[RMDB]
Structure probing data (2A3 and DMS) for a 207-nucleotide construct. It was measured as part of the RMDB library RNAMAK. For DMS the reverse transcriptase was MarathonRT.
RNA sequence: GGGAACGACUCGAGUAGAGUCGAAAAGCGUACUACUUCGAAACGUACAGGGAGCUCUAUAACACGAUAUCCCAAAUAGGAUAUCGGGAAAGUAGAGCGAAGAACUGUACUGAGUAGAAGUAUCGCAAACCCCCUAUCGUUUCGACGAUAGGGGGAAACAUAGAAUACAGUUCGCUGUAUUCUAUGUAAAAGAAACAACAACAACAAC
Reactivity to 2A3 in 0.01 (KOAc 150mM, MgCl2 10mM, bicine 150mM(pH8.5), 24C), signal-to-noise 8, nucleotides 027 to 156: g000c000g040u090a090c040u000a000c000u030u010c000g020a030a000a000c020g000u000a000c000a000g010g020g010a030g000c030u010c000u000a120u030a170a050c060a010c070g000a000u000a000u010c010c020c040a170a270a100u230a050g000g000a000u000a000u000c000g010g000g020a070a090a010g020u010a000g000a000g010c000g000a020a000g010a000a000c000u000g000u000a000c000u000g000a000g010u010a000g000a000a000g000u000a000u010c000g000c000a040a120a280c010c000c000c000c000u000a000u000c000g000u020u080u110c270g130a020c010g000a010u000a000g000g000g000g000g000a010a010
Reactivity to DMS in 0.01 (KOAc 150mM, MgCl2 10mM, bicine 150mM(pH8.5), 24C), signal-to-noise 4, nucleotides 027 to 156: g020c020g050u010a050c110u000a010c000u010u000c010g000a200a180a300c300g000u000a000c000a020g000g010g010a300g020c000u000c010u000a010u000a060a300c030a070c000g000a020u000a000u000c010c000c000a050a100a210u000a030g030g000a020u000a000u000c010g010g010g000a020a070a250g000u000a010g010a020g030c000g000a060a100g000a110a120c020u000g000u000a010c000u010g020a080g020u000a130g000a050a020g000u000a000u000c020g020c010a060a070a170c010c000c000c000c000u010a010u000c010g010u000u000u010c300g010a080c000g010a030u000a020g010g010g000g010g000a000a000
High 2A3 reactivity points to a flexible backbone, as in loops and unpaired stretches.